[RMDB]
RNA sequence: GGGAACGACUCGAGUAGAGUCGAAAACGCCGGCGCCACCAUCGGCUCCAUCGUCCGCUCUGUGCCUGACAUCGGCGUGCGGGGCCUGGGGAUCCUACCGGCGGUGUCGGGGCAGUUUGUGAGCCACCAAUACGAUGCGAUUCGUCGCAUCGUAUUGAAAAGAAACAACAACAACAAC
Reactivity to DMS in 0.01 (KOAc 150mM, MgCl2 10mM, bicine 150mM(pH8.5), 24C), signal-to-noise 4, nucleotides 027 to 126: c090g010c030c020g010g000c080g020c030c020a060c060c050a080u000c160g010g000c010u000c020c020a060u000c100g020u000c030c030g000c060u010c020u000g010u000g000c030c010u000g010a060c050a040u000c040g010g000c010g000u010g020c040g000g000g000g000c030c020u000g020g000g000g000a300u000c020c010u010a080c060c020g000g000c010g010g010u000g000u000c010g000g010g010g010c010a030g000u000u000u000g020u010g010a070g000c030c020a150c170
Reactivity to 2A3 in 0.01 (KOAc 150mM, MgCl2 10mM, bicine 150mM(pH8.5), 24C), signal-to-noise 5, nucleotides 027 to 126: c040g030c010c010g020g030c020g010c000c010a070c010c010a080u110c070g030g000c010u010c000c000a070u080c040g110u030c020c020g020c030u000c010u030g100u090g300c000c010u020g010a040c010a050u100c030g140g030c020g110u160g020c060g000g000g000g010c000c010u030g000g000g010g000a030u030c000c000u020a040c010c020g110g000c000g000g000u010g000u000c010g010g000g000g010c010a040g000u030u090u120g080u060g030a040g020c020c000a030c030
Source: RMDB library OK2TRN, as collected in RNAgym.
An RNA of 177 nucleotides, treated with DMS and 2A3 and read out base by base.
The RNA was probed in 150 mM KOAc, 10 mM MgCl2 and 150 mM bicine (pH 8.5) at 24 C.